[RMDB]
RNA sequence: GGGAACGACUCGAGUAGAGUCGAAAAACGAGGAUCGGCUUGCCGGGAAGCAGCGUCUUGCGCGCCACCUUGCCCACCGCCUGAUCCAGCGACAGCACAUAUUGGGUCGCCGCAGGCGCAUUGAUGAGUCGCACUAUGGAUUCGUCCAUAGUGCGACAAAAGAAACAACAACAACAAC
Reactivity to DMS in 0.01 (KOAc 150mM, MgCl2 10mM, bicine 150mM(pH8.5), 24C), signal-to-noise 1, nucleotides 027 to 126: a300c100g020a010g000g000a060u000c050g030g000c000u000u000g030c030c030g020g010g030a060a110g040c220a080g060c070g010u000c040u010u000g020c160g010c110g000c000c040a080c080c000u000u000g020c030c000c020a090c250c000g010c000c010u000g000a010u020c030c300a090g000c010g000a020c000a050g000c030a060c230a130u010a110u000u000g040g010g020u020c010g000c010c090g040c020a010g010g020c060g000c120a020u000u000g040a090u000g000a270
Reactivity to 2A3 in 0.01 (KOAc 150mM, MgCl2 10mM, bicine 150mM(pH8.5), 24C), signal-to-noise 2, nucleotides 027 to 126: a000c040g010a050g000g010a130u190c090g040g010c090u100u100g000c040c030g010g000g030a040a000g080c100a000g020c000g040u030c060u080u150g030c120g000c000g020c030c010a040c000c000u000u060g100c000c010c000a010c000c030g030c000c000u060g040a100u060c080c040a030g000c030g000a010c000a060g220c110a060c030a150u290a190u140u300g060g020g000u010c020g010c020c040g010c000a010g030g000c010g000c050a090u040u210g070a040u120g050a020
The record gives the reactivity of an RNA of 177 nucleotides to DMS and 2A3. As a SHAPE reagent, 2A3 marks flexible, mostly unpaired nucleotides at the ribose 2'-OH. The RNA was probed in 150 mM KOAc, 10 mM MgCl2 and 150 mM bicine (pH 8.5) at 24 C.